Conditions: 150 mM KOAc, 10 mM MgCl2 and 150 mM bicine (pH 8.5), 24 C. This 207-nucleotide RNA was probed chemically with 2A3. For 2A3, 588 sequencing reads were counted. It was measured as part of the RMDB library M2RFPK.
[RMDB]
RNA sequence: GGGAACGACUCGAGUAGAGUCGAAAAUCAUCAAGAAGUAGGCUUAGGCCAAUUGCUUGGUGGUGAAAGUAGAGGGAAGGUAGCACUUCGACGCCUCUAAGUACUCUGUGGGAGUAGUGCUUAAAUCAAAAGCACAGCGACUUCGGUCGCUGUGCAAGGAUGCAAAUGGGUUCGCCCAUUUGCAUCCAAAAGAAACAACAACAACAAC
Reactivity to 2A3 in 0.01 (KOAc 150mM, MgCl2 10mM, bicine 150mM(pH8.5), 24C), signal-to-noise 1, nucleotides 027 to 156: u000c000a000u000c000a060a020g000a130a090g050u060a040g040g000c010u110u150a090g160g100c000c000a040a030u070u060g020c000u020u020g000g000u000g000g000u050g020a070a070a010g070u040a010g010a010g060g020g030a040a000g090g010u140a040g090c040a040c070u010u010c010g060a070c070g120c010c000u010c010u020a030a020g010u010a070c000u010c040u050g100u180g090g080g000a120g000u080a000g000u040g010c000u060u120a060a040a060u230c140a070a090a010a000g000c010a000c000a000g030c020g000a010c000u040u070c200g100g000u010c010g020c000u000g000u000g010c000a000a000